Conditions: 150 mM KOAc, 10 mM MgCl2 and 150 mM bicine (pH 8.5), 24 C. This 177-nucleotide RNA was probed chemically with DMS and 2A3. Source: RMDB library TTRDEL, as collected in RNAgym. For DMS, 988 sequencing reads were counted. Reactivities are rounded to 0.1 and cut off at 0 and 3.
RNA sequence: GGGAACGACUCGAGUAGAGUCGAAAAGAUAUGGAUCACUUAGGCGACGAAGCAUGAGCACUCUCGGAAACGAGUUGCUCAUGCAGAGCCUUAGUGAUCCUAAGUCAAACAAGCCUUCGGGCUUGAAGCGGAAAUAGUUGUUCGCAACUAUUUCCGCAAAAGAAACAACAACAACAAC
Reactivity to DMS in 0.01 (KOAc 150mM, MgCl2 10mM, bicine 150mM(pH8.5), 24C), signal-to-noise 2, nucleotides 027 to 126: g000a040u010a300u020g020g010a000u000c000a000c000u000u000a030g040g010c010g010a060c290g000a060a110g000c010a010u000g000a020g020c000a040c100u010c000u000c020g050g020a100a120a210c010g010a010g010u000u000g000c010u000c080a000u010g020c000a010g020a100g000c010c010u000u000a010g010u010g000a000u000c000c000u010a000a030g010u000c050a100a100a290c010a010a020g020c010c000u020u000c140g050g010g000c000u000u000g010a070a130
Reactivity to 2A3 in 0.01 (KOAc 150mM, MgCl2 10mM, bicine 150mM(pH8.5), 24C), signal-to-noise 1, nucleotides 027 to 126: g000a020u080a050u180g020g000a000u000c000a000c020u080u070a020g010g030c030g100a300c040g070a300a020g070c000a000u010g020a000g040c030a010c070u200c010u010c030g000g070a030a090a000c020g030a030g040u010u020g020c000u020c050a000u000g000c020a000g000a010g000c000c000u000u000a000g000u010g000a000u000c000c000u000a000a000g000u010c010a020a050a110c000a000a000g000c000c000u070u100c270g060g050g000c000u000u000g000a030a030